[RMDB]
RNA sequence: GGGAACGACUCGAGUAGAGUCGAAAAGGUUCGAGAUUCGUCUCGAACCAAAUUAAAUCAGCGGUAAAUAAUUAGCUCCCGUUACCGCUGAACGGGAGCAUAUGGUCACUUGUUUCGACAAGUGAAAGUGCGUACUUUUAUUCGUAAAAGUACGCACAAAAGAAACAACAACAACAAC
Reactivity to 2A3 in 0.01 (KOAc 150mM, MgCl2 10mM, bicine 150mM(pH8.5), 24C), signal-to-noise 2, nucleotides 027 to 126: g000g000u000u010c010g020a010g000a000u010u090c100g030u000c110u020c010g010a000a000c020c000a000a000a000u030u030a000a010a020u010c000a000g020c000g150g160u190a050a070a050u060a020a110u120u140a070g000c010u000c000c000c000g000u000u020a160c040c010g020c010u000g000a000a010c000g000g000g000a010g000c000a020u110a090u100g170g000u030c000a000c000u020u010g020u040u140u100c230g100a010c000a000a000g000u000g010a010a020a010
Reactivity to DMS in 0.01 (KOAc 150mM, MgCl2 10mM, bicine 150mM(pH8.5), 24C), signal-to-noise 1, nucleotides 027 to 126: g000g020u000u000c000g020a040g020a070u000u000c270g010u000c000u010c000g000a000a000c000c010a000a010a020u020u000a060a100a100u000c000a010g000c000g010g000u000a010a040a030u000a060a020u000u010a130g000c000u000c000c000c000g010u000u000a060c020c000g000c000u000g000a020a000c010g000g030g010a020g060c020a040u030a060u010g010g000u000c000a010c000u000u000g030u000u000u000c140g000a010c000a010a010g000u000g000a010a060a050